[RMDB]
Overview
This 177-nucleotide RNA was probed chemically with DMS and 2A3. The reactions ran in a buffer of 150 mM KOAc, 10 mM MgCl2 and 150 mM bicine (pH 8.5), at 24 C. The data come from the RNA Mapping Database (RMDB), library OK2TST. For DMS, 3,114 sequencing reads were counted.
RNA sequence: GGGAACGACUCGAGUAGAGUCGAAAAGUAUCGCUAUUUCAGCCCUGUCUUCCUGUUCGACCCCGUGACGGGUGACGUCCUGGACCUUCAGAUGGGAGCGCUCACCAACAACCCGGCUAUCGACGGCGAGUAGUAGUCCUUUCGAGGACUACUACUCAAAAGAAACAACAACAACAAC
Reactivity to DMS in 0.01 (KOAc 150mM, MgCl2 10mM, bicine 150mM(pH8.5), 24C), signal-to-noise 3, nucleotides 027 to 126: g010u010a040u010c070g030c040u000a120u010u000u000c080a100g000c020c030c030u010g010u000c030u010u000c030c010u010g010u010u010c060g030a150c060c040c020c040g010u000g000a110c190g010g000g000u000g010a070c040g000u000c000c020u010g000g000a120c100c090u000u010c100a070g000a110u000g020g010g000a070g010c040g000c100u000c010a060c010c030a050a080c090a060a090c050c000c010g020g000c060u000a120u000c030g000a060c130g000g000c200
Reactivity to 2A3 in 0.01 (KOAc 150mM, MgCl2 10mM, bicine 150mM(pH8.5), 24C), signal-to-noise 2, nucleotides 027 to 126: g060u050a070u180c040g000c030u070a090u050u150u090c050a010g030c000c000c000u000g050u000c030u050u080c020c000u030g030u010u060c050g050a120c030c000c000c000g080u050g060a060c100g030g000g040u020g020a000c010g030u010c010c000u080g070g050a120c000c060u100u060c080a080g010a230u180g030g000g010a040g060c020g000c050u010c030a040c000c000a020a060c010a010a010c010c000c010g010g000c040u080a050u140c030g090a060c030g080g010c060